[RMDB]
This 207-nucleotide RNA was probed chemically with 2A3 and DMS. The reactions ran in a buffer of 150 mM KOAc, 10 mM MgCl2 and 150 mM bicine (pH 8.5), at 24 C.

RNA sequence: GGGAACGACUCGAGUAGAGUCGAAAACGCUGGGCAACGUAGUGGAGAGAUCAGCCUGGACAUGCCACCUGAAGCGCGCACGGGUGGCAACAGCCAGGCAGAUCUCUGCGAAGCUACGUUGCCUGUGCUGAAGCGCGCACGGCAACCGAAAGGUGCGGUAGUGUUUAGUGUUCGCACUAAACACUACAAAAGAAACAACAACAACAAC
Reactivity to 2A3 in 0.01 (KOAc 150mM, MgCl2 10mM, bicine 150mM(pH8.5), 24C), signal-to-noise 2, nucleotides 027 to 156: c030g000c010u050g000g000g000c000a010a000c000g000u000a000g000u010g020g010a020g000a000g020a010u000c000a000g000c010c000u020g000g000a070c050a180u180g000c000c000a010c000c000u030g060a200a040g000c000g000c000g000c010a020c020g010g000g020u000g020g030c010a000a010c000a000g030c000c000a000g000g010c000a000g000a000u000c000u000c000u050g060c000g000a000a000g010c000u010a010c010g000u000u000g000c000c000u000g000u000g000c000u050g010a070a030g000c000g000c010g000c000a000c010g050g010c000a070a090c010c000g040a090a020a040g000g000u020g010c010g060
Reactivity to DMS in 0.01 (KOAc 150mM, MgCl2 10mM, bicine 150mM(pH8.5), 24C), signal-to-noise 1, nucleotides 027 to 156: c030g120c040u010g000g010g000c010a020a000c010g000u010a080g030u030g020g000a030g030a010g000a010u000c030a060g040c030c000u000g020g010a130c060a270u000g030c010c000a050c020c020u000g010a090a110g030c010g070c000g010c010a300c110g000g070g020u000g000g020c000a020a040c060a160g030c050c010a030g020g030c000a000g010a010u000c020u000c000u040g000c130g000a210a270g000c010u000a000c000g000u000u000g030c000c010u000g000u020g010c010u000g000a070a030g010c010g050c070g030c000a210c030g000g000c020a050a150c030c020g030a150a170a100g010g030u010g020c000g020